[RMDB]
RNA sequence: GGGAACGACUCGAGUAGAGUCGAAAAGAUAUGGAACUCCAGAAUGCGCAUGGCCACUUCGGAAACGAAUGCCAUGAACUACGCAUUAUGGAGUUCCUAAGUCAAAAGCUUGUCUUCGGACAAGCAAGAAAAUUAUUAAGUUCGCUUAAUAAUUUUCAAAAGAAACAACAACAACAAC
Reactivity to DMS in 0.01 (KOAc 150mM, MgCl2 10mM, bicine 150mM(pH8.5), 24C), signal-to-noise 3, nucleotides 027 to 126: g010a040u010a300u000g010g020a010a010c010u000c000c010a020g010a030a010u000g010c000g000c030a000u000g000g000c010c070a030c070u000u000c000g010g000a130a090a180c000g000a060a000u010g010c000c000a010u000g000a060a040c100u010a300c010g010c000a020u000u000a040u000g010g000a010g000u000u000c000c000u000a000a110g000u010c050a090a110a140a100g000c000u000u000g000u000c000u000u010c180g010g000a000c000a000a000g000c000a020a050
Reactivity to 2A3 in 0.01 (KOAc 150mM, MgCl2 10mM, bicine 150mM(pH8.5), 24C), signal-to-noise 1, nucleotides 027 to 126: g000a000u070a060u140g000g000a000a010c000u010c000c000a000g040a020a000u000g010c040g010c030a010u000g000g020c030c020a090c080u020u000c010g030g040a040a080a050c010g020a010a010u300g010c000c010a000u000g000a010a000c030u120a020c030g000c000a010u000u000a010u000g000g000a000g000u010u000c000c000u000a000a000g010u000c000a020a010a100a120g000c000u000u000g000u000c010u020u040c220g000g000a000c000a010a000g000c000a010a010
Structure probing data (DMS and 2A3) for a 177-nucleotide construct. It was measured as part of the RMDB library TTRDEL. 2A3 adducts were read by reverse transcription with SuperScript II with manganese. The 2A3 profile rests on 3,850 reads. Values cover nucleotides 27 to 126. Conditions: 150 mM KOAc, 10 mM MgCl2 and 150 mM bicine (pH 8.5), 24 C.